[RMDB]
RNA sequence: GGGAACGACUCGAGUAGAGUCGAAAAGAUUCACCUCCGGGAGCCGAUGCUUACUACAGUGCGGUGCUGACACUGUUUGGUCAGGGAUGGGCACAACAUCGUUAUAGCUUUAAUCGUCAGGGUGAGCGAAUUCCUUUCCGUUCGCGGAAAGGAAUUCAAAAGAAACAACAACAACAAC
Reactivity to 2A3 in 0.01 (KOAc 150mM, MgCl2 10mM, bicine 150mM(pH8.5), 24C), signal-to-noise 1, nucleotides 027 to 126: g060a040u000u080c000a030c050c010u050c040c050g000g030g050a040g030c050c000g070a040u040g030c020u110u150a070c000u070a010c020a040g000u040g020c000g060g030u040g150c060u050g060a020c030a050c060u030g160u220u250u150g160g100u000c000a020g000g000g050a050u060g020g140g000c010a000c030a050a030c010a000u040c000g070u070u120a080u070a130g000c030u130u040u220a050a040u100c050g000u060c000a040g040g050g040u020g000a010g050c050
Reactivity to DMS in 0.01 (KOAc 150mM, MgCl2 10mM, bicine 150mM(pH8.5), 24C), signal-to-noise 1, nucleotides 027 to 126: g000a100u000u010c020a060c000c010u020c070c070g020g000g000a080g000c120c020g000a030u010g000c050u010u000a070c120u000a080c050a060g020u000g020c300g090g020u000g010c050u010g000a050c060a060c050u010g020u010u010u000g000g010u020c030a050g000g000g010a120u000g000g010g040c050a030c000a020a080c020a040u010c060g010u000u000a080u000a100g060c020u000u000u000a060a070u000c070g010u010c040a060g000g000g010u000g000a050g050c110